[RMDB]
RNA sequence: GGGAACGACUCGAGUAGAGUCGAAAAAAGGAGAGAGUGGAAGUUGAGAGUAAAUCUGUUUACAAGGGGCUCAGAGACUACAGUGGCAUUUCCACACUGAUAUGUCAGCUCACAAAUUCAUCGGAUGACAACUCUCAUGAUUCGUCAUGAGAGUUGUAAAAGAAACAACAACAACAAC
Reactivity to 2A3 in 0.01 (KOAc 150mM, MgCl2 10mM, bicine 150mM(pH8.5), 24C), signal-to-noise 5, nucleotides 027 to 126: a010a000g070g010a030g000a010g000a020g020u090g040g040a070a040g020u060u050g060a100g000a010g090u090a010a020a060u030c050u060g110u070u110u080a070c080a090a100g010g020g010g000c010u040c070a040g070a010g000a110c000u010a010c010a000g000u000g060g000c110a180u050u080u080c040c000a040c000a000c030u010g030a140u020a040u200g040u020c010a010g000c010u010c030a100c020a030a100a040u180u090c050a050u100c090g090g000a030u070g030
Reactivity to DMS in 0.01 (KOAc 150mM, MgCl2 10mM, bicine 150mM(pH8.5), 24C), signal-to-noise 5, nucleotides 027 to 126: a040a060g010g000a030g000a050g000a030g040u010g000g020a050a080g010u010u010g010a100g000a080g010u000a050a090a070u020c060u010g000u000u010u010a080c180a080a140g000g010g010g020c030u010c170a130g010a120g010a020c050u000a050c020a010g020u000g010g000c110a120u010u000u010c020c050a130c010a040c040u000g010a110u000a030u020g000u000c010a080g010c040u020c030a070c120a030a040a080u020u030c060a080u010c040g000g000a150u040g000
This 177-nucleotide RNA was probed chemically with 2A3 and DMS. The RNA was probed in 150 mM KOAc, 10 mM MgCl2 and 150 mM bicine (pH 8.5) at 24 C. DMS adducts were read by reverse transcription with MarathonRT.